[RMDB]
RNA sequence: GGGAACGACUCGAGUAGAGUCGAAAAUGCCUGACGUCACGAUGCCCGUGAAGCGUGGUGAUGCCCGGGGAGCUUUGGGUGUGGGUCCAGCUUUGUUCGUGGUGAGCGUGAGCAGCUCGCUGGUGAGGAAACAUCGUCAUUUCGAUGACGAUGUUUCAAAAGAAACAACAACAACAAC
Reactivity to DMS in 0.01 (KOAc 150mM, MgCl2 10mM, bicine 150mM(pH8.5), 24C), signal-to-noise 2, nucleotides 027 to 126: u010g010c040c010u000g010a190c050g010u010c020a050c010g010a080u000g010c040c050c030g000u010g010a110a190g050c040g010u000g000g020u010g000a050u000g000c040c010c060g030g020g040g010a100g010c030u000u010u000g010g010g020u000g010u000g010g030g020u000c060c040a070g010c060u010u020u010g020u000u020c040g000u000g020g010u000g000a060g020c030g010u000g000a090g010c140a160g000c020u000c060g020c060u020g030g000u000g000a140g000
Reactivity to 2A3 in 0.01 (KOAc 150mM, MgCl2 10mM, bicine 150mM(pH8.5), 24C), signal-to-noise 2, nucleotides 027 to 126: u120g030c000c000u000g030a040c050g040u090c000a000c050g160a100u140g050c000c010c000g060u070g040a050a000g050c100g040u110g030g060u040g040a050u090g000c000c010c040g000g000g030g070a080g000c040u100u130u150g030g020g030u060g040u100g060g030g000u000c020c020a030g030c000u110u120u140g080u080u110c090g060u100g040g010u080g020a040g030c010g040u020g050a050g000c010a030g000c010u000c010g000c000u050g000g030u050g060a110g000
The record gives the reactivity of an RNA of 177 nucleotides to DMS and 2A3. The 2A3 profile rests on 1,850 reads. The data come from the RNA Mapping Database (RMDB), library OK2TRN. The DMS profile rests on 2,435 reads. For 2A3 the reverse transcriptase was SuperScript II with manganese.